[RMDB]
RNA sequence: GGGAACGACUCGAGUAGAGUCGAAAAGGAGGAGGUCUGCCCAAAUUCCCUUAUAUCCCUAACACGGCAGACUUCGUAUUGCCUGAUAAAGGGAAUUUGGUGUUAGGGAUUUGACUAGGACCUCAGACUUCACGAAUCUAUUCGUAGAUUCGUGAAGAAAAGAAACAACAACAACAAC
Reactivity to 2A3 in 0.01 (KOAc 150mM, MgCl2 10mM, bicine 150mM(pH8.5), 24C), signal-to-noise 4, nucleotides 027 to 126: g080g030a030g040g030a020g010g010u020c010u040g030c010c000c010a010a060a040u040u030c020c010c010u060u100a290u030a030u110c000c020c010u020a050a020c020a010c070g030g000c020a020g020a060c000u090u050c040g030u070a060u080u060g060c020c010u050g020a080u180a150a110a020g000g010g040a030a030u050u040u080g050g000u060g010u040u030a060g060g020g010a000u070u020u050g010a000c020u020a020g040g010a010c000c000u000c010a030g030a050
Reactivity to DMS in 0.01 (KOAc 150mM, MgCl2 10mM, bicine 150mM(pH8.5), 24C), signal-to-noise 5, nucleotides 027 to 126: g000g020a250g010g020a040g000g010u000c000u000g010c110c010c030a020a070a100u000u000c030c000c000u000u010a110u000a100u010c000c060c030u010a070a110c120a080c150g000g010c010a020g000a040c060u010u010c180g020u000a030u000u000g000c000c000u000g010a100u010a080a100a030g000g000g020a020a020u000u000u000g010g010u000g000u000u010a040g010g000g000a120u000u010u010g020a090c080u010a070g000g000a050c020c030u000c020a110g000a190
Chemical mapping of a 177-nucleotide RNA with 2A3 and DMS. Source: RMDB library OK2TRN, as collected in RNAgym. The reactions ran in a buffer of 150 mM KOAc, 10 mM MgCl2 and 150 mM bicine (pH 8.5), at 24 C.